[RMDB]
RNA sequence: GGGAACGACUCGAGUAGAGUCGAAAAGUUCCAAGAGUGUCUUGGACAAAAGCAGGAAGUGGAACCUUGUUAAGGUCGGAACGAACUGCCUUAAGGAAGUCGAUGCUCCAGGUCCGUCCACGAGGACUUACAGGGAAAGAUUCGUCUUUCCCUGUAAAAAAGAAACAACAACAACAAC
Reactivity to DMS in 0.01 (KOAc 150mM, MgCl2 10mM, bicine 150mM(pH8.5), 24C), signal-to-noise 9, nucleotides 027 to 126: g010u020u000c010c010a050a060g000a280g020u020g010u010c020u010u010g010g010a050c070a080a060a140a150g010c030a030g010g000a110a190g010u000g000g010a160a060c020c010u000u000g020u020u030a050a030g000g010u010c050g020g020a190a040c060g020a200a230c020u000g010c010c040u010u010a080a120g000g010a080a070g010u010c080g020a080u010g010c030u010c020c060a090g000g000u010c030c020g000u010c020c020a090c130g000a170g000g000a040c050
Reactivity to 2A3 in 0.01 (KOAc 150mM, MgCl2 10mM, bicine 150mM(pH8.5), 24C), signal-to-noise 9, nucleotides 027 to 126: g040u080u020c010c000a020a010g050a020g060u250g040u060c020u060u100g040g000a010c030a020a140a020a010g030c050a020g040g080a210a030g040u060g040g040a060a040c010c000u060u100g140u230u240a070a020g010g030u050c060g060g070a070a020c030g010a040a020c000u020g000c000c000u070u090a040a020g080g030a030a070g030u070c040g020a030u060g010c000u010c020c010a020g030g020u010c020c000g020u020c020c010a040c100g060a090g010g020a010c000

Description: An RNA of 177 nucleotides, treated with DMS and 2A3 and read out base by base. For DMS the reverse transcriptase was MarathonRT. The data come from the RNA Mapping Database (RMDB), libraries RFM100 and RFMREP. For 2A3 the reverse transcriptase was SuperScript II with manganese. As a SHAPE reagent, 2A3 marks flexible, mostly unpaired nucleotides at the ribose 2'-OH.